[RMDB]
This 207-nucleotide RNA was probed chemically with 2A3.
The reactions ran in a buffer of 150 mM KOAc, 10 mM MgCl2 and 150 mM bicine (pH 8.5), at 24 C.
For 2A3 the reverse transcriptase was SuperScript II with manganese.
RNA sequence: GGGAACGACUCGAGUAGAGUCGAAAAACUGACGGUACGCCGUCAGAACGGUAGAAAAGAUGGUUUGAAAACCACGCCUUCUACCAAUAUAGAAAAUAAAUAGGCGGAGCGGUCAUACGUGACCGCAAAAACAUCCUUGGCUUCGGCCAAGGAUGAAUCAUCGAGAUGACUUCGGUCAUCUCGAUGAAAAAGAAACAACAACAACAAC
Reactivity to 2A3 in 0.01 (KOAc 150mM, MgCl2 10mM, bicine 150mM(pH8.5), 24C), signal-to-noise 1, nucleotides 027 to 156: a000c000u000g010a000c000g020g010u070a020c130g040c070c000g000u000c000a000g000a000a010c030g000g010u010a000g010a010a020a020a020g020a220u050g010g060u070u070u200g160a160a110a000a000c000c000a000c010g000c000c000u020u010c000u000a000c000c000a010a000u080a000u010a030g080a020a020a000a000u100a020a110a000u070a050g000g000c000g010g000a000g000c020g000g000u000c010a000u010a040c160g070u050g000a000c000c020g000c010a000a000a000a000a000c000a000u000c000c000u000u000g000g000c010u070u080c160g090g000c000c000a010a010g000g000a000u000g000a000a010